An RNA of 177 nucleotides, treated with DMS and 2A3 and read out base by base. Values are in units of 0.01, from 0 to 300, in steps of 10. 2A3 adducts were read by reverse transcription with SuperScript II with manganese.
RNA sequence: GGGAACGACUCGAGUAGAGUCGAAAACAGUACUCAGUAUGCGCGCGCGGCGCGUGAUCCGCGGCCGAGGCCGGCCUGAUCGGCCAUCGGCCUGGCCCUACAGGCCGGCCAGUACAGGAUCAGGCCGCUAGAUAUCAGACUUCGGUCUGAUAUCUAGAAAAGAAACAACAACAACAAC
Reactivity to DMS in 0.01 (KOAc 150mM, MgCl2 10mM, bicine 150mM(pH8.5), 24C), signal-to-noise 7, nucleotides 027 to 126: c100a140g010u010a070c040u000c100a120g020u010a050u010g010c050g010c040g010c060g020c100g010g010c030g030c040g020u000g010a040u000c030c030g010c060g010g020c020c040g020a080g020g010c020c010g020g000c000c010u010g000a290u000c200g010g030c000c020a020u010c050g010g010c060c030u000g000g010c000c010c090u000a200c050a030g020g020c000c010g020g010c010c010a020g010u000a050c100a140g000g000a060u000c090a090g010g010c000c000g000
Reactivity to 2A3 in 0.01 (KOAc 150mM, MgCl2 10mM, bicine 150mM(pH8.5), 24C), signal-to-noise 2, nucleotides 027 to 126: c020a020g090u120a080c040u060c110a050g060u130a140u230g080c080g000c020g000c020g000c030g130g010c030g040c040g110u020g010a040u030c000c030g020c060g050g000c020c040g040a070g000g020c000c000g020g040c010c000u070g030a120u120c050g010g060c000c000a030u060c010g060g020c000c000u000g020g000c010c000c030u120a080c010a000g030g000c030c020g000g000c000c010a000g000u010a020c020a020g000g040a040u050c020a000g010g000c010c010g000
Description: The reactions ran in a buffer of 150 mM KOAc, 10 mM MgCl2 and 150 mM bicine (pH 8.5), at 24 C. Source: RMDB library OK2TRN, as collected in RNAgym.